[RMDB]
RNA sequence: GGGAACGACUCGAGUAGAGUCGAAAAGUUGCGUGAUUAUUUAGCUGACUAUGACGUAGCAGUCACUGCCGGCCCAUUCAUGGAUAAUGCUAUUAAUGUUGGUGGUACAGGAUUACAGUAUGCCGCCCACAUGCUAAUAGUUCGCUAUUAGCAUGUGAAAAGAAACAACAACAACAAC
Reactivity to DMS in 0.01 (KOAc 150mM, MgCl2 10mM, bicine 150mM(pH8.5), 24C), signal-to-noise 9, nucleotides 027 to 126: g020u010u000g020c050g020u000g010a060u000u010a120u010u000u010a130g010c020u000g010a070c030u000a080u000g010a050c120g010u000a130g020c100a150g010u000c030a030c060u010g010c020c010g020g010c020c070c090a070u000u000c080a050u000g010g000a070u010a070a080u000g010c070u000a050u000u000a050a060u000g000u000u000g020g020u000g010g020u000a070c080a090g000g010a130u000u000a090c160a080g010u000a090u000g010c000c020g010c030c020
Reactivity to 2A3 in 0.01 (KOAc 150mM, MgCl2 10mM, bicine 150mM(pH8.5), 24C), signal-to-noise 9, nucleotides 027 to 126: g080u080u070g010c020g020u030g060a040u020u120a050u120u180u150a040g000c020u020g060a060c020u050a080u230g050a040c070g020u020a010g000c020a010g030u050c020a010c080u050g000c010c010g050g010c010c020c010a020u070u070c050a050u060g040g010a040u060a210a040u170g030c040u050a040u190u070a140a050u080g040u090u050g020g010u010g000g000u020a020c020a050g060g040a070u150u080a070c000a020g080u080a050u080g020c010c000g010c000c000
Source: RMDB library 15KREP, as collected in RNAgym.
An RNA of 177 nucleotides, treated with DMS and 2A3 and read out base by base.
For 2A3, 15,839 sequencing reads were counted.
DMS adducts were read by reverse transcription with MarathonRT.
Reactivities are given for positions 27 through 126.